This 177-nucleotide RNA was probed chemically with 2A3. The reactions ran in a buffer of 150 mM KOAc, 10 mM MgCl2 and 150 mM bicine (pH 8.5), at 24 C. For 2A3 the reverse transcriptase was SuperScript II with manganese. The 2A3 profile rests on 726 reads. Reactivities are given for positions 27 through 126. It was measured as part of the RMDB library RFM100.
[RMDB]
RNA sequence: GGGAACGACUCGAGUAGAGUCGAAAAUUCCUUUUGGGGCCGUCCAACAGGGGGCGCCAGUUCUCUCCGCGCUCCCGCGUGGCUGGCCCCUGAUGGUCUUAGACCUCAAGGAUUGCUUCUUUUCUAUGAUAUCGACCUAAUUCGUUAGGUCGAUAUCAAAAGAAACAACAACAACAAC
Reactivity to 2A3 in 0.01 (KOAc 150mM, MgCl2 10mM, bicine 150mM(pH8.5), 24C), signal-to-noise 1, nucleotides 027 to 126: u000u020c000c000u050u010u070u060g050g000g000g010c020c000g030u120c010c000a030a060c000a040g000g000g000g000g000c000g000c020c000a040g030u240u050c160u010c000u040c140c020g010c000g030c000u000c000c020c010g000c120g010u000g000g000c000u000g000g030c000c000c000c000u040g000a000u020g030g010u030c030u090u090a060g020a030c000c020u070c020a060a040g160g070a180u020u010g070c070u110u000c000u040u160u040u000c030u010a100u020